RNA sequence: GGGAACGACUCGAGUAGAGUCGAAAAUUGGUUCUGUAUGUCGCCGUCGCGAUCAUUUCCUUUCUGGGGGCGUACGUACAAACAAGCAAGGAAUACUACGCCGCGGGUAAUGCUAUAUGCAACAGCGACGUAUCCUAGCAUUCGUGCUAGGAUACGUAAAAGAAACAACAACAACAAC
Reactivity to 2A3 in 0.01 (KOAc 150mM, MgCl2 10mM, bicine 150mM(pH8.5), 24C), signal-to-noise 4, nucleotides 027 to 126: u070u140g090g010u110u030c080u050g020u040a120u040g020u000c010g000c020c020g140u030c030g000c020g060a060u020c020a040u020u060u060c030c000u050u130u170c190u130g160g000g000g010g000c000g000u040a040c060g010u010a000c090a090a110a000c030a040a000g110c030a050a050g120g090a130a040u050a130c000u000a000c030g020c010c010g070c010g070g020g010u060a070a000u040g070c080u060a040u010a030u300g000c030a040a010c000a080g010c010g030
Reactivity to DMS in 0.01 (KOAc 150mM, MgCl2 10mM, bicine 150mM(pH8.5), 24C), signal-to-noise 3, nucleotides 027 to 126: u010u030g000g000u000u010c090u010g000u030a070u030g000u000c020g030c000c020g020u000c040g010c060g030a040u060c070a060u000u030u020c010c040u000u050u020c130u030g020g010g050g010g000c010g000u020a030c140g030u010a000c100a100a060a040c100a080a090g000c270a080a120g000g000a090a240u000a040c040u010a030c040g000c120c010g010c060g000g000g000u020a020a040u000g080c150u000a080u050a090u080g020c020a030a070c080a090g000c000g040